[RMDB]
RNA sequence: GGGAACGACUCGAGUAGAGUCGAAAAACUGCGAUACGUGGCAGAAACACGCCUUACCAGGACUAAACAGCGUGUCUAAAAAACAGUCCUUCAUACCUGAUCUGGAGGGUAGAUCAGGAAUACUAAAAAAAUCGGGUGAAGUUCGCUUCACCCGAAAGCUUAGCUAAUAGUUCGCUAUUAGCUAAGCAAAAGAAACAACAACAACAAC
Reactivity to 2A3 in 0.01 (KOAc 150mM, MgCl2 10mM, bicine 150mM(pH8.5), 24C), signal-to-noise 3, nucleotides 027 to 156: a000c020u020g010c020g010a040u040a170c070g040u080g080g010c010a010g020a030a030a000c000a000c000g010c000c000u040u050a020c010c040a010g010g000a000c000u060a140a020a010c010a010g000c010g010u000g020u020c120u060a000a010a020a000a000a000c030a010g000u000c030c000u020u080c040a070u080a150c000c000u000g000a000u000c000u020g060g050a070g040g050g030u030a010g000a000u010c020a000g040g000a000a000u110a050c060u100a030a020a020a000a010a020a120u030c000g010g000g000u000g000a000a010g010u060u080c100g040c090u000u000c000a000c000c000c000g000a010a000a000
Reactivity to DMS in 0.01 (KOAc 150mM, MgCl2 10mM, bicine 150mM(pH8.5), 24C), signal-to-noise 1, nucleotides 027 to 156: a080c010u000g000c010g050a230u000a110c110g000u020g010g020c040a100g000a300a170a100c030a010c010g010c000c000u000u010a100c070c040a020g010g000a130c030u000a120a080a070c040a000g000c030g050u000g010u000c090u030a000a030a040a120a060a040c080a140g010u000c000c000u000u010c090a170u000a130c000c000u000g020a010u000c000u000g010g030a150g000g010g010u000a040g000a030u000c010a030g020g010a010a050u000a170c050u000a000a010a030a070a120a060a070u010c000g030g040g020u000g020a040a010g010u000u000c300g000c010u000u000c020a000c000c010c000g000a000a020a080